[RMDB]
RNA sequence: GGGAACGACUCGAGUAGAGUCGAAAAUUCGAAGCCUCCUUUGGCUACUACCCGGUGGAAACAACUGAAGCUUCAACGCCUUUUUUUCCUAUCUUCUUUAGCACCGGGCUAGGGAGUAAGCCCGUGGAACCUUAGUUUUGUUCCCUCGGGACUUACUGAAUACCAUAAACUUCGGUUUAUGGUAUUCAAAAGAAACAACAACAACAAC
Reactivity to 2A3 in 0.01 (KOAc 150mM, MgCl2 10mM, bicine 150mM(pH8.5), 24C), signal-to-noise 3, nucleotides 027 to 156: u100u060c020g070a050a010g040c020c010u100c000c090u160u140u170g020g010c000u030a030c000u050a040c030c010c020g000g020u030g020g080a170a130a030c040a070a020c070u080g030a110a000g050c020u210u190c150a110a040c080g070c000c030u080u100u050u010u020u110u140c020c040u090a210u190c070u190u070c010u080u130u100a070g030c030a010c020c010g000g000g000c010u020a010g010g020g000a050g010u000a000a000g000c000c030c010g010u010g010g000a010a020c010c020u140u050a260g070u100u220u270u200g000u020u000c000c010c030u070c000g000g000g080a140c000u000u010a010c000u010
Reactivity to DMS in 0.01 (KOAc 150mM, MgCl2 10mM, bicine 150mM(pH8.5), 24C), signal-to-noise 1, nucleotides 027 to 156: u000u000c050g010a080a100g000c010c010u000c120c150u010u010u000g040g030c020u000a100c050u000a090c010c000c010g010g070u000g020g000a210a130a090c100a070a150c060u010g040a070a090g020c050u000u000c050a070a130c080g010c030c030u000u000u000u000u000u000u000c010c000u000a100u000c020u000u000c040u000u010u010a090g010c010a050c070c000g050g020g010c020u000a040g010g010g020a080g010u000a010a030g000c000c000c000g020u010g010g000a030a050c010c090u010u010a140g040u000u000u020u010g000u000u000c020c000c040u000c030g000g040g010a060c000u000u010a020c030u000